[RMDB]
RNA sequence: GGGAACGACUCGAGUAGAGUCGAAAAAACCGACUUACUAGAGUUGAAGCUUCUACCGUUGUCUGUGGUGGAAAACGUACGUUUUAUAUCACAGCAAAUGGCGGUAUUUCAUUCUGUCGUAGGCAUAGUAUCGAUCUCUUCGGAGAUCGAAAAAGAAACAACAACAACAAC
Reactivity to DMS in 0.01 (KOAc 150mM, MgCl2 10mM, bicine 150mM(pH8.5), 24C), signal-to-noise 3, nucleotides 027 to 129: a110a080c010c020g020a000c020u040u010a020c000u020a060g030a000g030u010u000g040a070a080g040c190u050u060c070u050a000c020c020g090u020u030g030u000c010u020g000u000g060g000u030g000g000a070a000a000a010c020g050u090a090c150g030u000u000u030u050a000u000a060u030c020a020c020a000g040c100a080a050a040u080g020g020c080g000g000u060a000u030u040u020c090a050u020u020c070u010g050u020c110g020u030a040g010g030c060a080u000a000g040u000a070
Reactivity to 2A3 in 0.01 (KOAc 150mM, MgCl2 10mM, bicine 150mM(pH8.5), 24C), signal-to-noise 8, nucleotides 027 to 129: a000a000c060c000g000a020c010u000u010a000c000u010a000g000a020g000u010u020g050a080a010g060c020u160u050c020u070a080c000c020g010u010u040g060u050c000u010g010u000g010g010u000g040g020a000a010a010a000c040g230u300a010c060g010u060u000u010u000a010u000a000u010c000a010c010a010g030c030a020a050a120u220g050g000c010g000g010u030a110u010u050u050c070a080u070u020c020u060g120u070c050g040u050a030g040g010c040a090u070a090g050u070a100
The record gives the reactivity of an RNA of 170 nucleotides to DMS and 2A3. Source: RMDB library 15KLIB, as collected in RNAgym. For 2A3, 20,710 sequencing reads were counted.